[RMDB]
RNA sequence: GGGAACGACUCGAGUAGAGUCGAAAAUGAUUUGCUAUGGCCGAGUGAGGGGGGCUUCACCUGAGGGUGAGGCCAUCCUAUCCACUUCUGGUGCCGGACACCGGUACUACUGGGACGGUCGCACUGCCGGUUGCAUAAAUUUCGAUUUAUGCAACCGAAAAGAAACAACAACAACAAC
Reactivity to 2A3 in 0.01 (KOAc 150mM, MgCl2 10mM, bicine 150mM(pH8.5), 24C), signal-to-noise 7, nucleotides 027 to 126: u150g040a050u060u060u120g030c030u070a100u230g010g000c010c010g030a030g050u120g070a090g010g000g010g010g000g000c000u000u000c000a000c000c010u050g080a240g090g010g000u010g000a000g010g000c000c000a020u020c000c000u010a120u020c010c000a040c010u110u040c030u100g010g000u020g010c000c010g030g010a080c100a150c070c000g000g000u010a030c010u020a040c060u090g010g030g050a030c020g010g000u010c030g010c030a050c050u060g040c030
Reactivity to DMS in 0.01 (KOAc 150mM, MgCl2 10mM, bicine 150mM(pH8.5), 24C), signal-to-noise 4, nucleotides 027 to 126: u010g010a130u000u000u000g000c040u000a080u020g020g010c000c020g000a110g030u010g010a070g000g000g020g000g000g010c000u000u010c000a000c000c010u000g030a130g040g010g030u000g000a020g010g020c000c000a010u020c010c000u000a090u010c070c010a050c070u010u030c160u000g010g010u000g000c000c020g000g000a200c150a140c030c010g000g000u010a030c020u010a030c160u000g000g000g010a230c050g000g010u000c030g010c110a070c130u000g000c210
The record gives the reactivity of an RNA of 177 nucleotides to 2A3 and DMS.
The reactions ran in a buffer of 150 mM KOAc, 10 mM MgCl2 and 150 mM bicine (pH 8.5), at 24 C.
Source: RMDB libraries RFM100 and RFMREP, as collected in RNAgym.
High 2A3 reactivity points to a flexible backbone, as in loops and unpaired stretches.